Annotation
This 177-nucleotide RNA was probed chemically with DMS and 2A3. For DMS the reverse transcriptase was MarathonRT.
RNA sequence: GGGAACGACUCGAGUAGAGUCGAAAAGAAGAUCACGGAAUUCUGCGAGCGAACAACCUGCAGGCAUAAACUCUUUUCGGAUUUCUUUGGAGAUCCAACUCCAGAUUGUAGUGGGCAAUGCGAUGUCCCACACUUGAGAUUUCGAUCUCAAGUGUGGAAAAGAAACAACAACAACAAC
Reactivity to DMS in 0.01 (KOAc 150mM, MgCl2 10mM, bicine 150mM(pH8.5), 24C), signal-to-noise 2, nucleotides 027 to 126: g000a110a090g000a090u000c070a080c150g010g000a080a080u010u000c020u000g000c090g020a060g000c030g010a100a070c110a120a140c040c030u000g000c030a030g010g020c130a090u000a110a080a100c070u000c030u010u000u000u000c110g020g000a050u000u010u000c010u010u000u010g030g000a030g000a060u000c040c100a040a110c040u000c020c050a040g020a090u000u010g010u010a050g040u000g000g000g000c020a040a060u000g000c130g030a070u010g040u010c060
Reactivity to 2A3 in 0.01 (KOAc 150mM, MgCl2 10mM, bicine 150mM(pH8.5), 24C), signal-to-noise 2, nucleotides 027 to 126: g010a000a000g020a020u050c040a010c140g020g030a060a060u100u040c030u070g050c030g060a070g030c030g040a100a040c020a020a060c030c020u010g000c020a020g040g000c010a030u140a050a120a070c030u030c000u070u080u110u120c060g020g000a030u060u000u060c040u090u110u260g000g010a010g000a030u030c000c020a010a060c010u010c020c010a000g010a090u050u140g090u030a050g030u100g060g010g000c020a040a020u060g070c030g050a030u080g020u070c020